[RMDB]
RNA sequence: GGGAACGACUCGAGUAGAGUCGAAAAGGUUGCUGAAGUGUGACGUGAGGAGCUUCAAUCCGCAUACUGUUUCCAAACUACACUUGUGAACCAUGACAUUGCUUUGCUUCCAAGACAUUUAAAAUUUCAGAGUAUUGGAACACAGGCAUAUACUCUAGAAUCUGAUCUUAUUCGUAAGAUCAGAUUCAAAAGAAACAACAACAACAAC
Reactivity to 2A3 in 0.01 (KOAc 150mM, MgCl2 10mM, bicine 150mM(pH8.5), 24C), signal-to-noise 9, nucleotides 027 to 156: g030g010u060u050g090c060u110g070a040a020g000u010g000u030g070a070c100g010u030g030a040g010g010a010g000c010u090u080c060a080a160u130c120c080g050c070a070u150a160c060u050g020u060u180u010c020c000a030a030a020c040u060a010c030a000c000u030u020g050u050g090a010a010c020c000a040u080g030a030c050a130u060u080g000c010u030u040u050g010c010u020u000c000c000a000a020g060a020c020a070u140u220u300a100a200a120a120u170u300u180c100a050g040a010g100u030a050u030u030g000g020a030a000c030a000c020a030g000g010c010a010u070a020u030a120c050u040c010u020a030
Reactivity to DMS in 0.01 (KOAc 150mM, MgCl2 10mM, bicine 150mM(pH8.5), 24C), signal-to-noise 4, nucleotides 027 to 156: g020g020u000u000g010c020u020g020a080a150g020u000g020u000g030a110c090g000u020g000a150g030g000a090g000c080u000u000c140a100a140u000c010c020g010c030a050u000a090c090u000g010u010u010u000c080c070a060a120a110c040u000a060c030a030c020u000u000g020u000g000a070a100c020c040a070u020g020a130c110a130u000u000g010c020u000u000u010g030c070u000u000c020c020a030a060g010a080c060a120u010u010u010a060a080a080a160u010u000u010c080a110g000a160g020u000a060u010u010g020g000a040a070c060a050c060a020g020g010c020a050u000a100u000a060c020u000c010u000a300